[RMDB]
Source: RMDB library OK2TRN, as collected in RNAgym. Chemical mapping of a 177-nucleotide RNA with DMS and 2A3. In probing experiments dimethyl sulfate is read out at A N1 and C N3, which are open when not base-paired. For 2A3, 3,891 sequencing reads were counted. The RNA was probed in 150 mM KOAc, 10 mM MgCl2 and 150 mM bicine (pH 8.5) at 24 C.
RNA sequence: GGGAACGACUCGAGUAGAGUCGAAAAGGACGCGGCCAUCGUCGAUGCGGUGAAGCUGUCGCAUCGCUACAUCUCCGGCCGCCAGUUGCCGGACAAGGCGAUCAGCGUGCUCGACACCGCCUGCGCAAAUUUAAUUUUAUUUCGAUAAAAUUAAAUUAAAAGAAACAACAACAACAAC
Reactivity to DMS in 0.01 (KOAc 150mM, MgCl2 10mM, bicine 150mM(pH8.5), 24C), signal-to-noise 7, nucleotides 027 to 126: g010g010a070c030g030c050g020g020c040c060a100u000c110g020u010c080g010a090u000g020c000g000g010u000g000a100a120g020c040u010g010u010c040g010c060a070u000c000g010c020u000a080c180a130u010c210u000c020c010g010g000c000c050g020c130c080a040g010u010u010g010c000c000g000g000a020c110a090a130g000g000c010g000a020u000c090a090g010c010g020u000g010c010u000c040g000a190c020a040c050c050g010c010c070u010g020c070g010c080a060
Reactivity to 2A3 in 0.01 (KOAc 150mM, MgCl2 10mM, bicine 150mM(pH8.5), 24C), signal-to-noise 3, nucleotides 027 to 126: g110g020a010c020g030c040g080g030c040c020a100u120c050g090u040c050g030a060u130g000c010g050g020u060g040a100a010g010c060u070g080u130c020g010c030a010u000c010g000c010u060a050c030a140u080c040u010c040c010g010g000c020c030g010c020c000a010g030u120u170g000c000c000g030g010a020c030a070a070g020g000c010g000a030u080c040a010g020c000g080u070g020c010u030c040g060a030c010a000c000c040g000c010c010u070g000c050g000c040a030